RNA sequence: GGGAACGACUCGAGUAGAGUCGAAAACAGAACAUAAUAGCAGCUCUUUGGAUGUAAACAGCGAAGCUGAAGUGGAAAUAAAAGCACAUGGUGUCAUUGGGGUUAUUGGCGUUCCAGGGUAUAUGUCACCUUUAGUUCGAUUCGUCGAACUAAAGGUAAAAGAAACAACAACAACAAC
Reactivity to DMS in 0.01 (KOAc 150mM, MgCl2 10mM, bicine 150mM(pH8.5), 24C), signal-to-noise 4, nucleotides 027 to 126: c060a150g010a090a100c070a070u010a070a090u000a080g020c030a060g000c030u000c030u000u000u010g010g010a090u000g000u010a040a060a100c060a040g020c040g020a100a080g010c040u000g010a050a090g020u000g010g010a070a080a100u010a030a060a070a070g010c060a040c070a080u010g010g010u010g020u000c050a080u000u010g030g000g000g010u010u000a070u000u000g010g020c060g000u000u000c050c030a050g000g020g020u010a070u010a060u010g000u000c140
Reactivity to 2A3 in 0.01 (KOAc 150mM, MgCl2 10mM, bicine 150mM(pH8.5), 24C), signal-to-noise 3, nucleotides 027 to 126: c040a000g110a080a000c030a030u210a130a040u080a190g040c030a010g000c010u010c030u070u090u130g060g020a070u080g070u230a040a060a060c000a020g010c030g090a090a010g000c030u010g000a060a010g060u030g020g060a060a060a040u120a030a080a020a000g050c030a000c000a050u020g020g000u030g040u010c030a060u050u100g010g020g030g020u060u070a040u080u120g040g000c040g010u030u000c010c000a010g030g000g060u070a080u030a030u190g070u060c030